[RMDB]
An RNA of 177 nucleotides, treated with 2A3 and DMS and read out base by base.
The RNA was probed in 150 mM KOAc, 10 mM MgCl2 and 150 mM bicine (pH 8.5) at 24 C.
RNA sequence: GGGAACGACUCGAGUAGAGUCGAAAAGAUAUGGAGCUCUCCGAUUGGGCGAAGAACUCGGAAACGAGGGAGCCUAGAGGAGAGGCUCCUAAGUCAAAACCUGUAACACGUUCGCGUGUUACAGGAAGUAUUAUGAUGCCUUCGGGCAUCAUAAUACAAAAGAAACAACAACAACAAC
Reactivity to 2A3 in 0.01 (KOAc 150mM, MgCl2 10mM, bicine 150mM(pH8.5), 24C), signal-to-noise 1, nucleotides 027 to 126: g020a020u050a060u140g010g000a000g020c010u010c010u000c000c020g090a160u060u290g010g000g020c010g160a200a010g060a040a020c000u010c010g000g020a070a040a070c020g020a020g000g020g000a000g010c010c010u050a030g000a020g000g000a010g020a020g000g000c000u000c010c000u010a110a000g040u000c030a000a060a130a190c000c000u000g010u000a000a000c000a000c010g050u090u110c300g010c010g200u000g000u000u000a000c010a010g000g000a010a000
Reactivity to DMS in 0.01 (KOAc 150mM, MgCl2 10mM, bicine 150mM(pH8.5), 24C), signal-to-noise 3, nucleotides 027 to 126: g020a050u010a300u020g000g000a020g020c010u000c000u010c000c000g000a300u000u000g020g000g020c000g000a080a160g010a140a140c000u010c000g000g000a190a070a180c010g010a040g000g000g010a110g020c010c000u000a030g010a300g000g000a000g010a040g020g010c010u000c000c000u010a020a080g000u010c050a130a070a090a130c000c000u000g000u000a000a010c010a000c000g010u010u010c200g020c000g010u000g000u000u000a000c000a010g000g000a000a030